[RMDB]
The record gives the reactivity of an RNA of 177 nucleotides to DMS and 2A3. For 2A3 the reverse transcriptase was SuperScript II with manganese. Source: RMDB library TTRDES, as collected in RNAgym. Conditions: 150 mM KOAc, 10 mM MgCl2 and 150 mM bicine (pH 8.5), 24 C. The DMS profile rests on 2,107 reads. Values cover nucleotides 27 to 126.
RNA sequence: GGGAACGACUCGAGUAGAGUCGAAAAGAUAUGGAGUCAUGAAGACAUGUCGAAGUCGGAAACGACUUGCGACAACAGCUUCUGUGACUCCUAAGUCAAAACCUACAGGUGUUCGCACCUGUAGGAAGAAAACGAUCAUGUUCGCAUGAUCGUUUUCAAAAGAAACAACAACAACAAC
Reactivity to DMS in 0.01 (KOAc 150mM, MgCl2 10mM, bicine 150mM(pH8.5), 24C), signal-to-noise 2, nucleotides 027 to 126: g010a020u010a300u010g020g000a030g020u000c000a020u010g000a010a000g010a160c150a190u000g020u000c010g020a040a000g000u000c010g020g020a060a040a140c010g010a000c000u000u000g020c010g020a000c000a050a130c300a120g020c010u010u000c000u000g060u000g010a010c000u000c000c010u020a010a050g020u000c010a150a060a100a140c000c000u000a000c000a020g000g030u000g000u020u010c210g030c000a010c000c000u000g030u000a000g010g000a060a040
Reactivity to 2A3 in 0.01 (KOAc 150mM, MgCl2 10mM, bicine 150mM(pH8.5), 24C), signal-to-noise 2, nucleotides 027 to 126: g000a000u040a020u100g000g010a000g000u000c020a010u060g020a040a010g070a220c250a300u100g010u000c010g010a010a000g010u010c000g000g010a020a010a040c020g020a020c000u020u050g300c020g030a000c020a030a030c090a060g070c010u050u000c030u090g090u000g030a010c010u000c000c000u000a030a000g000u000c000a020a030a130a230c010c010u000a000c000a000g020g000u030g110u100u270c300g030c110a000c010c000u000g000u000a010g020g000a000a010